[RMDB]
RNA sequence: GGGAACGACUCGAGUAGAGUCGAAAAGCGCUGGCACGCCUGGCCCGUUCUUAUCGGUUGGCGAUUGUUCACGGCAACGGGCCGCAGGUGGGGCUGCUGGCAUUGCAGAAUCUGGCGUGGAAAGAGGGUGCACGCCGAGAUUCGUCUCGGCGUGCACAAAAGAAACAACAACAACAAC
Reactivity to DMS in 0.01 (KOAc 150mM, MgCl2 10mM, bicine 150mM(pH8.5), 24C), signal-to-noise 1, nucleotides 027 to 126: g020c040g010c010u020g000g000c090a120c100g030c040c020u000g000g040c000c000c000g060u000u000c160u000u000a120u000c050g020g040u000u010g030g010c080g010a100u030u020g010u010u000c050a090c100g030g020c260a020a010c000g000g000g020c040c090g020c110a020g000g070u000g010g030g000g040c020u000g000c030u010g000g020c110a070u010u000g000c060a060g000a040a090u000c030u010g010g010c000g030u010g010g000a060a060a090g020a090g010g000
Reactivity to 2A3 in 0.01 (KOAc 150mM, MgCl2 10mM, bicine 150mM(pH8.5), 24C), signal-to-noise 1, nucleotides 027 to 126: g080c010g000c010u040g060g050c010a030c040g010c000c000u030g010g010c000c000c000g000u000u060c070u140u130a230u200c050g190g020u130u170g090g080c010g110a230u050u300g000u040u170c000a040c000g000g060c020a030a050c040g030g000g000c040c010g030c030a010g000g030u090g010g030g060g020c000u000g010c040u010g040g110c040a070u050u300g050c000a010g000a010a100u070c030u060g010g020c080g080u070g100g100a060a070a010g130a070g000g140
Annotation
The record gives the reactivity of an RNA of 177 nucleotides to DMS and 2A3. Reactivities are given for positions 27 through 126. Conditions: 150 mM KOAc, 10 mM MgCl2 and 150 mM bicine (pH 8.5), 24 C. It was measured as part of the RMDB library OK2TRN. For 2A3, 827 sequencing reads were counted.